[RMDB]
RNA sequence: GGGAACGACUCGAGUAGAGUCGAAAAUUGCAAAUCUCAGUUUUUAUCUCCUCAUCGGAUCUGACCUCCAUGAUGAGGGACAUCUGAGAUAUCGUAUCUUCAAAGGACUCCGCAUUGUCUGCAUGAGGCGGUCAGUGCCUUUCGAGGCACUGACCGCAAAAGAAACAACAACAACAAC
Reactivity to 2A3 in 0.01 (KOAc 150mM, MgCl2 10mM, bicine 150mM(pH8.5), 24C), signal-to-noise 1, nucleotides 027 to 126: u260u170g080c030a090a210a120u000c000u040c040a040g000u000u010u010u010u010a140u080c300u060c000c000u000c000a000u000c000g000g000a010u040c000u300g110a220c000c010u050c000c000a200u300g000a000u000g000a030g000g000g000a000c020a030u000c000u000g000a000g010a000u000a050u050c010g150u110a010u000c090u170u000c060a050a030a080g090g000a000c040u000c020c000g000c000a000u060u110g000u010c000u130g070c020a040u100g010a000g140
Notes:
The data come from the RNA Mapping Database (RMDB), library OK1LIB. Chemical mapping of a 177-nucleotide RNA with 2A3. Values are in units of 0.01, from 0 to 300, in steps of 10. Conditions: 150 mM KOAc, 10 mM MgCl2 and 150 mM bicine (pH 8.5), 24 C.